[RMDB]
RNA sequence: GGGAACGACUCGAGUAGAGUCGAAAAGAUAUGGAACUAUCUUAGCAAGGCUGACUGUUCGGAAACGAACAGCAGCUGAUGACCUAAGAGUAGUUCCUAAGUCAAAACGAAGUGUUCGCACUUCGAACCUCUAGACGAUGUUCGCAUCGUCUAGAGGAAAAGAAACAACAACAACAAC
Reactivity to DMS in 0.01 (KOAc 150mM, MgCl2 10mM, bicine 150mM(pH8.5), 24C), signal-to-noise 2, nucleotides 027 to 126: g020a040u000a300u020g000g030a000a010c000u000a020u000c020u000u020a020g000c070a110a110g000g010c000u010g000a200c000u000g010u000u000c030g010g000a150a110a280c000g020a040a000c000a010g000c000a010g010c000u000g020a040u010g020a060c300c010u000a020a020g000a070g020u000a000g020u010u000c000c000u000a010a080g000u000c030a060a080a110a150c000g000a000a020g040u000g000u000u010c300g020c030a010c000u000u000c020g000a040a140
Reactivity to 2A3 in 0.01 (KOAc 150mM, MgCl2 10mM, bicine 150mM(pH8.5), 24C), signal-to-noise 3, nucleotides 027 to 126: g010a000u090a050u180g010g000a000a000c000u000a020u040c000u010u020a010g060c080a300a300g060g000c020u010g120a300c000u000g070u000u000c010g040g000a080a070a100c010g000a010a000c000a000g000c000a000g000c000u000g000a010u030g010a000c000c000u000a000a010g040a010g120u130a010g030u000u000c000c000u000a070a030g040u030c030a020a020a120a150c010g000a000a000g000u010g070u120u290c300g040c140a000c000u000u000c000g000a030a090